[RMDB]
RNA sequence: GGGAACGACUCGAGUAGAGUCGAAAAGCAUACGAGAACAACUUCGCGAAAAUCGACUACCGAAUGAGCGAAAUCGAAUUCAUGACAGCGAAACUCAGCCUCAUCAACCAAUAUUUCACGAAAAUCGCAACAAGGCAAUCACAACUCGCAAGUGAACGUCCACUACUCACUUCGGUGAGUAGUGGACAAAAGAAACAACAACAACAAC
Reactivity to 2A3 in 0.01 (KOAc 150mM, MgCl2 10mM, bicine 150mM(pH8.5), 24C), signal-to-noise 2, nucleotides 027 to 156: g020c000a030u150a150c080g010a000g090a140a010c040a010a010c060u110u020c020g040c000g110a020a020a020a020u100c030g090a120c140u150a060c180c010g090a100a170u060g000a080g080c030g010a010a010a050u050c070g090a000a000u060u050c030a110u050g070a130c030a110g020c010g120a040a060a070c070u090c060a040g070c010c000u000c020a060u000c000a010a110c070c000a030a000u080a150u140u060u040c000a010c120g010a110a030a030a030u020c000g000c050a010a010c010a030a030g110g000c000a040a000u040c010a000c010a130a050c040u060c020g020c050a070a040g010u030g050a030a000c030